Conditions: 150 mM KOAc, 10 mM MgCl2 and 150 mM bicine (pH 8.5), 24 C. The record gives the reactivity of an RNA of 177 nucleotides to 2A3 and DMS. Values cover nucleotides 27 to 126. The 2A3 profile rests on 2,214 reads. It was measured as part of the RMDB library OK1LIB. For 2A3 the reverse transcriptase was SuperScript II with manganese. As a SHAPE reagent, 2A3 marks flexible, mostly unpaired nucleotides at the ribose 2'-OH.
RNA sequence: GGGAACGACUCGAGUAGAGUCGAAAAACAAAAACGACGGUGCCCAGGACUGGCAGAUCUAACGGCCGCGCGGUUGCCCACGAGUGACCCGUAGCCAAUCGCGGCUCCCCUUACUGGAGCUUUACUGAAUGUGUUUCUUCUUCGGAAGAAACACAUUAAAAGAAACAACAACAACAAC
Reactivity to 2A3 in 0.01 (KOAc 150mM, MgCl2 10mM, bicine 150mM(pH8.5), 24C), signal-to-noise 3, nucleotides 027 to 126: a000c040a010a080a020a020a010c060g060a010c010g030g040u050g000c000c000c000a030g030g020a020c040u050g030g000c040a010g010a100u020c040u140a140a050c080g020g000c000c000g000c000g030c060g020g000u000u010g000c040c000c050a260c100g110a170g040u030g020a030c000c020c000g020u010a010g000c010c010a020a020u070c060g000c030g080g010c010u010c000c010c000c000u070u150a090c040u050g080g000a080g020c000u070u110u100a090c050u040g070
Reactivity to DMS in 0.01 (KOAc 150mM, MgCl2 10mM, bicine 150mM(pH8.5), 24C), signal-to-noise 3, nucleotides 027 to 126: a120c090a050a070a090a110a070c220g010a110c100g020g010u000g010c000c030c040a100g000g000a090c040u040g000g020c120a000g000a070u030c060u030a110a110c140g000g050c020c000g000c010g020c110g000g000u030u000g010c080c030c070a080c240g000a040g000u030g010a030c030c010c010g020u010a030g020c040c030a050a030u010c090g000c060g000g000c020u000c060c000c040c110u020u010a110c110u010g000g000a200g000c080u000u000u010a050c070u020g000